[RMDB]
RNA sequence: GGGAACGACUCGAGUAGAGUCGAAAAUAGACUUGGGUGAGAACAAUCGUGAUACCCAAAUCACUCUAUGUCACGAUUGGUGUACGCUAUAGAGUGAUUUGGUUGUAGCGUACACUCUCAUUCAAGAGAUUGUUAGGUGAUUCGUCACUUGGCAAUCAAAAGAAACAACAACAACAAC
Reactivity to DMS in 0.01 (KOAc 150mM, MgCl2 10mM, bicine 150mM(pH8.5), 24C), signal-to-noise 9, nucleotides 027 to 126: u050a090g000a180c010u000u000g000g000g000u000g000a010g000a260a240c050a090a060u030c000g010u000g000a080u100a050c260c080c080a030a030a070u000c010a010c010u000c000u000a070u010g020u010c000a010c010g000a090u010u020g010g010u000g000u020a010c020g020c110u030a040u010a030g000a010g010u000g010a090u010u010u010g000g010u020u010g010u000a120g000c000g000u000a050c230a100c050u020c000u000c000a000u000u000c000a000a010g000a090
Reactivity to 2A3 in 0.01 (KOAc 150mM, MgCl2 10mM, bicine 150mM(pH8.5), 24C), signal-to-noise 9, nucleotides 027 to 126: u200a010g090a030c000u000u000g010g000g000u000g010a000g000a020a010c010a020a060u090c000g000u010g010a020u090a110c040c030c000a010a020a010u020c000a000c000u000c010u030a030u090g020u010c000a010c030g190a270u040u110g070g000u020g010u030a010c020g000c020u030a010u010a030g010a000g010u020g040a070u070u020u060g080g000u030u080g010u010a000g000c000g000u010a000c010a010c020u010c000u000c000a000u010u000c000a000a000g020a010

Annotation
An RNA of 177 nucleotides, treated with DMS and 2A3 and read out base by base. 2A3 adducts were read by reverse transcription with SuperScript II with manganese. The reactions ran in a buffer of 150 mM KOAc, 10 mM MgCl2 and 150 mM bicine (pH 8.5), at 24 C. For 2A3, 188,417 sequencing reads were counted.